Structure probing data (2A3) for a 207-nucleotide construct. It was measured as part of the RMDB library OK3TST. For 2A3 the reverse transcriptase was SuperScript II with manganese. The RNA was probed in 150 mM KOAc, 10 mM MgCl2 and 150 mM bicine (pH 8.5) at 24 C. For 2A3, 811 sequencing reads were counted. Values cover nucleotides 27 to 156.
RNA sequence: GGGAACGACUCGAGUAGAGUCGAAAAAUUUUAGGGUCUACUACUGGAGGACUAGUCUUAAGACAGUGGGACAAAAGUUCUUGAGAUUUUCACCCCUUAAUCAAUAUGCACAUGUUGACUACCCAUGUGUAAGGCAGUCGAGAGAAGCAGAGAAGAAGCUAAUGAGCUGAUUCGUCAGCUCAUUAGCAAAAGAAACAACAACAACAAC
Reactivity to 2A3 in 0.01 (KOAc 150mM, MgCl2 10mM, bicine 150mM(pH8.5), 24C), signal-to-noise 2, nucleotides 027 to 156: a000u150u140u090u070a060g000g000g020u000c040u030a050c040u030a050c030u130g050g020a030g040g000a010c020u040a040g000u000c020u100u100a050a050g080a040c020a100g070u100g040g020g000a020c020a070a110a050a040g050u070u000c030u010u030g030a050g010a110u080u020u000u140c040a070c000c000c000c010u020u030a060a010u090c030a030a060u080a090u290g010c000a000c010a010u050g040u060u190g060a070c020u070a030c000c010c000a000u000g010u030g040u080a030a030g000g010c020a000g020u090c050g010a000g000a000g010a090a040g000c040a020g000a000g000a110a000g020a080a000